[RMDB]
RNA sequence: GGGAACGACUCGAGUAGAGUCGAAAAGCGGGGCUUGAAACGCGGGUAGCGCGCACGCGCGGCGAAGAAGUUCGCAUACGCGGUGUGCUGGUGCCGAAGUGUCUGCUGCAACGGCACGCUCGACACCUAGAACAUACCGUAUUCGUACGGUAUGUAAUAGUGGUGAAAUGUUCGCAUUUCACCACUAAAAAGAAACAACAACAACAAC
Reactivity to DMS in 0.01 (KOAc 150mM, MgCl2 10mM, bicine 150mM(pH8.5), 24C), signal-to-noise 1, nucleotides 027 to 156: g050c030g040g020g040g090c050u030u010g000a100a080a060c060g040c020g000g040g020u000a080g000c060g000c000g030c020a030c010g000c060g030c020g000g000c000g010a040a060g010a300a100g000u000u000c020g040c020a210u000a110c040g000c010g040g020u030g010u010g030c000u010g020g030u000g020c000c030g000a060a150g010u010g030u000c010u010g020c020u010g050c180a120a110c110g000g030c020a010c000g010c060u000c000g030a020c030a040c000c020u010a120g030a150a060c000a000u000a000c000c000g000u000a040u000u000c280g040u000a040c000g020g000u000a000u000g030u000a050a090
Reactivity to 2A3 in 0.01 (KOAc 150mM, MgCl2 10mM, bicine 150mM(pH8.5), 24C), signal-to-noise 3, nucleotides 027 to 156: g050c030g000g010g030g030c020u030u060g070a090a100a050c040g020c040g030g000g020u060a010g060c000g010c000g000c020a020c020g190c000g000c010g020g000c000g010a000a010g060a080a040g150u050u010c020g000c020a040u030a200c040g000c030g010g010u020g000u000g000c030u050g000g040u010g010c000c020g020a080a010g010u010g040u030c030u090g020c070u120g010c090a090a010c040g030g000c020a000c040g010c040u020c000g010a010c010a020c020c000u050a050g020a110a010c000a000u000a000c000c000g010u010a010u010u070c110g040u020a000c000g000g000u000a000u000g000u000a000a020
Conditions: 150 mM KOAc, 10 mM MgCl2 and 150 mM bicine (pH 8.5), 24 C. Structure probing data (DMS and 2A3) for a 207-nucleotide construct. As a SHAPE reagent, 2A3 marks flexible, mostly unpaired nucleotides at the ribose 2'-OH. For 2A3 the reverse transcriptase was SuperScript II with manganese. For DMS, 2,801 sequencing reads were counted.